Record summary: Source: RMDB library TTRDEL, as collected in RNAgym. This 177-nucleotide RNA was probed chemically with DMS and 2A3. For DMS the reverse transcriptase was MarathonRT.
[RMDB]
RNA sequence: GGGAACGACUCGAGUAGAGUCGAAAAGAUAUGGAGAGUUCUUUUGACGAAGCUACAUCGGAAACGAUGUAGGCUUCGAUAAGAACCUCCUAAGUCAAACAUUUGAGGCGUUCGCGCCUCAAAUGAAGCUUAAGAUAGUGUUCGCACUAUCUUAAGCAAAAGAAACAACAACAACAAC
Reactivity to DMS in 0.01 (KOAc 150mM, MgCl2 10mM, bicine 150mM(pH8.5), 24C), signal-to-noise 4, nucleotides 027 to 126: g000a050u000a300u010g010g000a020g000a150g000u000u000c000u000u000u000u000g020a170c110g000a000a000g000c000u000a000c000a000u000c010g010g000a110a080a180c000g000a010u000g000u000a000g030g010c010u000u000c000g010a100u010a010a010g010a020a000c000c000u000c000c000u000a020a080g010u010c040a160a090a300c010a000u000u000u010g000a020g000g010c010g040u000u020c250g020c020g010c000c000u000c000a000a000a000u000g000a080a110
Reactivity to 2A3 in 0.01 (KOAc 150mM, MgCl2 10mM, bicine 150mM(pH8.5), 24C), signal-to-noise 4, nucleotides 027 to 126: g000a020u050a020u130g000g020a010g010a030g020u010u020c030u040u130u120u230g220a160c100g000a000a010g010c010u000a010c010a010u000c000g010g010a060a040a030c010g010a010u020g000u000a010g010g040c010u010u000c010g000a000u010a010a000g000a000a000c000c000u010c000c000u010a070a010g040u010c030a120a090a150c010a020u000u010u010g010a000g010g000c030g070u090u130c300g030c010g060c160c010u000c000a000a000a000u000g010a010a010